[RMDB]
An RNA of 177 nucleotides, treated with DMS and 2A3 and read out base by base. The RNA was probed in 150 mM KOAc, 10 mM MgCl2 and 150 mM bicine (pH 8.5) at 24 C. High DMS reactivity at an A or C suggests that its Watson-Crick edge is free. For 2A3 the reverse transcriptase was SuperScript II with manganese.

RNA sequence: GGGAACGACUCGAGUAGAGUCGAAAAAUCGGAGUUAGCAUCCGCCGGUGAUGGCGGAAUGACGAUCCAGCUGGACAGCGUCCCGCUGCGGGCCAAGGAGAUGACGCCCGCCGAGGUGCUCUGCAGCCCGGCGUACAGCAUUCGUGCUGUACGCCGGAAAAGAAACAACAACAACAAC
Reactivity to DMS in 0.01 (KOAc 150mM, MgCl2 10mM, bicine 150mM(pH8.5), 24C), signal-to-noise 2, nucleotides 027 to 126: a050u000c060g000g000a110g020u010u000a140g050c100a090u000c000c000g000c000c000g000g030u000g000a150u000g030g000c040g000g010a030a050u000g010a060c050g000a070u000c040c020a150g000c010u000g010g000a060c120a040g000c050g000u000c020c000c010g000c120u020g010c010g010g000g000c020c050a100a280g000g000a140g000a090u000g010a300c250g030c030c000c010g040c000c060g000a070g000g000u000g000c010u000c140u000g000c020a020g000c060
Reactivity to 2A3 in 0.01 (KOAc 150mM, MgCl2 10mM, bicine 150mM(pH8.5), 24C), signal-to-noise 1, nucleotides 027 to 126: a000u110c060g010g000a060g070u180u060a020g030c010a040u010c000c010g010c010c000g180g120u300g040a230u260g020g000c030g000g030a020a000u010g030a030c020g000a010u000c000c000a010g000c020u020g000g090a020c000a030g000c010g060u070c020c010c000g010c090u090g010c010g010g010g000c010c040a160a110g150g060a300g100a100u090g000a060c110g000c000c000c060g010c000c020g000a030g010g000u010g020c020u030c000u100g100c010a000g000c040